[RMDB]
RNA sequence: GGGAACGACUCGAGUAGAGUCGAAAAGGAUGUUAAUAUGCAGAUUAUGGGUGUGGUUAUGCAGAGUGGUGUGAGAAAAGUUACAUAUGGUACUGCGCAUUGGUUGUUUGCGACCCUUGUCUCAACCUGAGGUACGCGUUCGCGCGUACCAAAAGAAACAACAACAACAAC
Reactivity to DMS in 0.01 (KOAc 150mM, MgCl2 10mM, bicine 150mM(pH8.5), 24C), signal-to-noise 2, nucleotides 027 to 129: g040g000a000u060g000u010u110a100a020u040a070u000g020c000a010g010a150u030u010a030u030g000g000g000u030g040u030g050g000u030u010a100u030g060c070a080g020a140g070u030g010g000u020g030u040g030a080g080a010a010a010a020g020u010u070a080c000a050u090a130u000g000g060u030a110c070u050g040c080g010c060a130u020u040g000g100u000u000g050u000u000u040g010c080g060a120c130c000c040u020u020g000u040c000u030c050a050a140c180c050u000g000a140
Reactivity to 2A3 in 0.01 (KOAc 150mM, MgCl2 10mM, bicine 150mM(pH8.5), 24C), signal-to-noise 2, nucleotides 027 to 129: g060g010a080u060g020u110u040a050a000u000a000u230g030c000a000g000a040u130u070a160u300g040g020g000u070g040u050g100g000u090u070a040u190g010c000a000g000a000g110u020g000g030u050g030u010g000a070g000a050a040a000a000g020u030u060a000c000a010u300a090u210g060g060u030a070c050u010g010c000g000c020a090u130u000g000g060u000u010g040u020u080u000g000c010g030a050c000c000c000u160u000g030u000c060u100c070a000a060c010c000u040g000a010
This 170-nucleotide RNA was probed chemically with DMS and 2A3. Conditions: 150 mM KOAc, 10 mM MgCl2 and 150 mM bicine (pH 8.5), 24 C. 2A3 adducts were read by reverse transcription with SuperScript II with manganese. DMS adducts were read by reverse transcription with MarathonRT. DMS (dimethyl sulfate) methylates the pairing face of unpaired adenines and cytosines. For DMS, 6,950 sequencing reads were counted.